[RMDB]
RNA sequence: GGGAACGACUCGAGUAGAGUCGAAAAAGCGAGUACACACUCCUAGAAAAUAGGAGUGAUCCACGCGUAAAGUACUCGCAAGUAGCAAAUCAAAGUAUCCGAUAAGGAUACGCGCGUGGGCUACAAACAUUACCAGCUGAUUCGUCAGCUGGUAAUGAAAAGAAACAACAACAACAAC
Reactivity to DMS in 0.01 (KOAc 150mM, MgCl2 10mM, bicine 150mM(pH8.5), 24C), signal-to-noise 4, nucleotides 027 to 126: a110g010c000g020a020g000u000a010c030a300c020a010c000u000c000c000u000a020g000a120a070a090a090u000a010g010g000a030g000u000g000a060u050c000c010a000c040g020c010g030u020a040a080a070g000u000a000c000u000c010g000c000a030a060g000u000a060g000c110a070a110a090u030c130a070a080a130g010u010a000u000c000c000g020a170u050a090a160g000g010a010u000a000c010g030c030g010c030g020u000g000g020g000c200u010a040c070a130a110a200
Reactivity to 2A3 in 0.01 (KOAc 150mM, MgCl2 10mM, bicine 150mM(pH8.5), 24C), signal-to-noise 9, nucleotides 027 to 126: a010g000c000g000a000g000u000a000c030a010c000a000c010u000c000c000u010a030g100a110a300a020a020u020a000g000g000a000g000u000g000a010u020c000c000a000c000g000c000g010u040a070a080a090g000u000a000c000u000c000g000c000a010a010g070u140a010g050c080a070a080a090u170c050a130a060a020g000u000a000u000c010c010g050a160u110a300a050g000g000a000u000a000c000g000c010g000c000g000u000g000g010g000c010u080a050c000a050a090a010